[RMDB]
RNA sequence: GGGAACGACUCGAGUAGAGUCGAAAAUCACCACUGUAGACGAGGAACUCUGUAGGUGCCAGAACACGUUGGAAAGCAUUCUUCUUACAGAUUCCCACAGCGUGUUGCAAAUGUUUGACGGCGCAACCGCUAUUUAGCGUUUCGACGCUAAAUAGCGAAAAGAAACAACAACAACAAC
Reactivity to 2A3 in 0.01 (KOAc 150mM, MgCl2 10mM, bicine 150mM(pH8.5), 24C), signal-to-noise 8, nucleotides 027 to 126: u060c020a050c050c000a030c050u050g050u110a070g050a140c070g040a110g080g020a030a030c050u000c020u020g030u030a040g050g030u040g080c070c040a030g040a070a030c090a020c150g080u080u080g070g090a110a060a010g030c020a040u060u010c010u050u000c000u000u040a040c020a010g030a060u020u020c010c020c000a030c000a010g060c080g030u040g010u040u030g000c020a060a060a110u090g080u060u060u140g100a070c040g010g030c040g000c050a020a010c020
Reactivity to DMS in 0.01 (KOAc 150mM, MgCl2 10mM, bicine 150mM(pH8.5), 24C), signal-to-noise 4, nucleotides 027 to 126: u030c080a080c080c030a110c090u020g000u000a060g000a060c100g050a070g010g020a060a090c090u000c030u000g010u020a040g030g010u010g010c090c080a110g030a040a070c090a030c140g000u010u010g020g030a100a090a070g000c130a140u010u010c040u000u000c070u000u000a030c080a020g040a100u010u020c010c000c030a180c120a050g000c080g010u040g030u000u000g010c030a050a090a240u000g000u010u030u010g020a070c060g000g020c090g000c080a060a030c130